[RMDB]
RNA sequence: GGGAACGACUCGAGUAGAGUCGAAAACAAGCACGUGUAGAAAGUCAUGCCGCCGCCUCUGUUAGACGUGUCCUUGUACGUCACGAUAGUGCCUGCCAGGAACUUCACGGAAGUGGUGGGUACCAGCUGAGGCAUUCAAAUUCGUUUGAAUGCCUCAAAAAGAAACAACAACAACAAC
Reactivity to 2A3 in 0.01 (KOAc 150mM, MgCl2 10mM, bicine 150mM(pH8.5), 24C), signal-to-noise 2, nucleotides 027 to 126: c030a030a000g060c040a030c120g060u080g030u060a060g120a170a180a020g090u100c020a020u090g090c000c040g020c000c020g040c010c010u020c010u040g050u110u080a030g020a020c030g060u080g130u030c000c040u040u020g040u070a040c080g030u010c010a000c080g080a120u140a180g000u010g020c020c000u000g000c010c020a020g020g040a050a100c010u070u050c090a040c090g040g010a000a000g000u020g000g000u040g010g000g000u020a020c000c030a020g060c060
Reactivity to DMS in 0.01 (KOAc 150mM, MgCl2 10mM, bicine 150mM(pH8.5), 24C), signal-to-noise 3, nucleotides 027 to 126: c060a080a100g020c060a070c080g030u030g010u000a070g000a110a110a070g010u020c060a080u000g000c000c040g010c030c050g020c010c020u000c050u000g000u000u010a070g020a040c040g010u000g000u010c050c030u000u000g000u000a030c160g000u000c010a050c070g000a130u020a070g000u010g000c040c020u000g020c000c040a050g020g000a150a070c020u000u010c080a090c170g010g000a030a170g030u000g000g000u000g000g010g010u000a030c020c060a100g000c160
Chemical mapping of a 177-nucleotide RNA with 2A3 and DMS. For DMS the reverse transcriptase was MarathonRT. The 2A3 profile rests on 1,869 reads. For 2A3 the reverse transcriptase was SuperScript II with manganese. Reactivities are given for positions 27 through 126. The reactions ran in a buffer of 150 mM KOAc, 10 mM MgCl2 and 150 mM bicine (pH 8.5), at 24 C.